Chemical mapping of a 177-nucleotide RNA with 2A3 and DMS. The reactions ran in a buffer of 150 mM KOAc, 10 mM MgCl2 and 150 mM bicine (pH 8.5), at 24 C.

RNA sequence: GGGAACGACUCGAGUAGAGUCGAAAACGGCGGUGCGUGGACGGACAGCUCCAAGCGUCGCGAGGAGUUUUGUUGCCUGUUUGGCUGGAAACAUGGGGGUGUCGGUUAGCUGGGAGGUCCGGAACGGCGAUAAAUAAUCAUUCGUGAUUAUUUAUCGAAAAGAAACAACAACAACAAC
Reactivity to 2A3 in 0.01 (KOAc 150mM, MgCl2 10mM, bicine 150mM(pH8.5), 24C), signal-to-noise 7, nucleotides 027 to 126: c020g020g000c010g010g020u040g000c030g020u040g030g040a020c020g020g030a020c020a030g000c030u000c000c010a030a010g000c010g110u060c050g000c000g000a050g030g000a050g000u030u060u060u070g090u070u090g030c010c030u080g070u090u090u130g040g000c010u020g040g030a060a040a030c040a090u110g030g000g000g000g010u030g020u020c010g000g030u050u060a020g000c010u020g000g010g010a010g010g000u010c010c000g010g010a040a010c020g040g000
Reactivity to DMS in 0.01 (KOAc 150mM, MgCl2 10mM, bicine 150mM(pH8.5), 24C), signal-to-noise 9, nucleotides 027 to 126: c060g010g010c030g010g020u000g010c030g030u010g000g010a060c050g020g010a100c140a160g000c090u000c010c010a050a190g010c030g010u010c080g000c020g010a160g000g000a110g010u010u010u020u010g000u000u010g010c060c030u000g000u010u010u010g000g010c020u000g010g000a090a060a080c100a060u020g000g000g000g010g020u010g010u010c050g000g000u010u010a070g020c050u010g000g000g010a080g010g000u000c010c030g010g000a060a070c100g000g000
Source information: 2A3 adducts were read by reverse transcription with SuperScript II with manganese. The DMS profile rests on 66,841 reads.